[RMDB]
RNA sequence: GGGAACGACUCGAGUAGAGUCGAAAAUCCAGCUAAAGAGUGGAGGAAAUCUCGGAAAGCUUCCCCCAAGAAGAACUGGGACGCUCUCAAGAAGGAGGAGAUUUCCCGAAAGCUGGAGACUCGCGGACCUUACAUAACAGUUCGCUGUUAUGUAAGGAAAAGAAACAACAACAACAAC
Reactivity to 2A3 in 0.01 (KOAc 150mM, MgCl2 10mM, bicine 150mM(pH8.5), 24C), signal-to-noise 4, nucleotides 027 to 126: u000c000c000a000g000c020u110a090a170a060g150a110g090u200g080g060a130g060g000a030a010a000u000c010u000c030g100g040a090a040a020g020c000u010u020c000c010c000c010c020a020a020g110a110a000g020a090a030c050u030g000g000g000a000c040g010c010u020c000u000c020a010a090g100a090a020g140g060a010g010g030a000g000a000u000u010u010c010c010c000g040a080a030a000g000c010u000g010g000a010g010a010c000u010c030g080c050g030g010a040
Reactivity to DMS in 0.01 (KOAc 150mM, MgCl2 10mM, bicine 150mM(pH8.5), 24C), signal-to-noise 3, nucleotides 027 to 126: u000c000c000a030g020c000u010a150a130a150g010a150g040u010g020g010a140g000g000a030a010a020u000c010u000c010g010g000a050a060a060g010c040u000u000c130c010c000c140c120a100a080g020a120a100g000a070a130c180u010g000g000g010a020c080g010c010u000c010u000c010a140a090g010a070a090g020g010a130g010g000a010g010a050u000u000u000c000c010c020g000a090a090a030g020c010u000g000g000a010g010a080c030u000c040g010c160g020g000a270